[RMDB]
RNA sequence: GGGAACGACUCGAGUAGAGUCGAAAAACGUAGAAGGUCAUGAUGUAGUCGUCCCCGUGGUCCAGAUCUACGCUAGAGAUGGAGAGAUCUACGGUGUCUAUCUCGUUGAUGAACUCUUCGUAGUCCGACUCCGACAUGAAGGAUAUCGAAAGAUAUAUGAUGUAUAAGGUUUCGACCUUAUACAUCAAAAAGAAACAACAACAACAAC
Reactivity to DMS in 0.01 (KOAc 150mM, MgCl2 10mM, bicine 150mM(pH8.5), 24C), signal-to-noise 5, nucleotides 027 to 156: a040c020g030u000a050g020a090a090g030g000u010c040a070u000g020a150u010g020u000a060g030u000c030g020u000c010c010c010c010g030u010g010g000u010c030c040a100g020a150u000c020u010a070c050g010c090u010a100g010a120g010a150u000g000g010a120g010a150g010a080u000c020u000a130c020g010g020u000g010u010c030u000a110u000c020u000c060g020u010u000g010a070u010g010a040a070c030u000c020u000u000c050g030u010a080g010u000c010c030g010a170c040u000c030c020g000a070c070a080u000g010a110a260g010g010a070u000a030u000c010g010a130a050a140g010a050u000a050u000a190
Reactivity to 2A3 in 0.01 (KOAc 150mM, MgCl2 10mM, bicine 150mM(pH8.5), 24C), signal-to-noise 9, nucleotides 027 to 156: a000c060g020u050a030g010a120a020g040g030u050c020a030u040g100a050u110g080u210a020g020u030c020g010u010c020c010c010c000g010u040g010g030u040c020c020a030g000a110u000c010u040a030c070g020c120u090a030g010a010g010a090u080g050g000a030g010a010g010a070u020c020u050a020c040g010g050u050g040u040c050u060a100u050c050u010c050g040u050u060g040a070u050g050a070a060c010u010c000u090u040c010g040u050a020g040u000c010c000g040a050c020u010c030c020g090a080c040a080u170g060a090a050g050g030a020u020a020u070c020g030a090a050a020g030a010u040a000u030a040